[RMDB]
RNA sequence: GGGAACGACUCGAGUAGAGUCGAAAACUUAGUUUGUCGAUAUGAGGCAUAAUGCCCUACAACGUAGCGGUGUCAUAUAAUUGAGAAGUCUAAAUUUAAGGAUUAGCGUUCUCAAUCAUGCGACACUGUGGCCUACGAAAUUCGUUUCGUAGGCCACAAAAGAAACAACAACAACAAC
Reactivity to DMS in 0.01 (KOAc 150mM, MgCl2 10mM, bicine 150mM(pH8.5), 24C), signal-to-noise 1, nucleotides 027 to 126: c000u000u010a120g010u000u000u000g010u000c050g010a110u000a090u000g000a190g000g000c020a080u000a150a130u040g000c060c000c020u000a110c140a030a030c160g010u020a150g010c030g000g070u000g000u010c000a000u000a010u000a000a020u000u000g000a040g010a030a170g020u020c020u000a000a020a050u010u000u070a210a180g020g000a060u000u020a000g000c020g000u010u000c000u000c000a000a000u010c000a000u000g000c090g000a010c030a000c010u010
Reactivity to 2A3 in 0.01 (KOAc 150mM, MgCl2 10mM, bicine 150mM(pH8.5), 24C), signal-to-noise 2, nucleotides 027 to 126: c030u000u010a050g110u060u060u090g010u020c050g020a020u040a100u250g130a100g070g000c030a000u050a100a110u280g010c000c000c000u010a030c010a240a010c140g090u020a010g090c050g000g000u000g000u000c000a040u130a040u000a120a070u000u000g000a000g060a010a010g170u130c000u070a050a160a200u090u160u060a180a080g230g020a120u120u050a000g000c060g110u070u000c000u000c000a000a010u000c000a000u020g000c000g000a000c000a000c020u010
This 177-nucleotide RNA was probed chemically with DMS and 2A3. Values cover nucleotides 27 to 126. DMS adducts were read by reverse transcription with MarathonRT. The RNA was probed in 150 mM KOAc, 10 mM MgCl2 and 150 mM bicine (pH 8.5) at 24 C. Values are in units of 0.01, from 0 to 300, in steps of 10. It was measured as part of the RMDB libraries RFM100 and RFMREP. 2A3 adducts were read by reverse transcription with SuperScript II with manganese.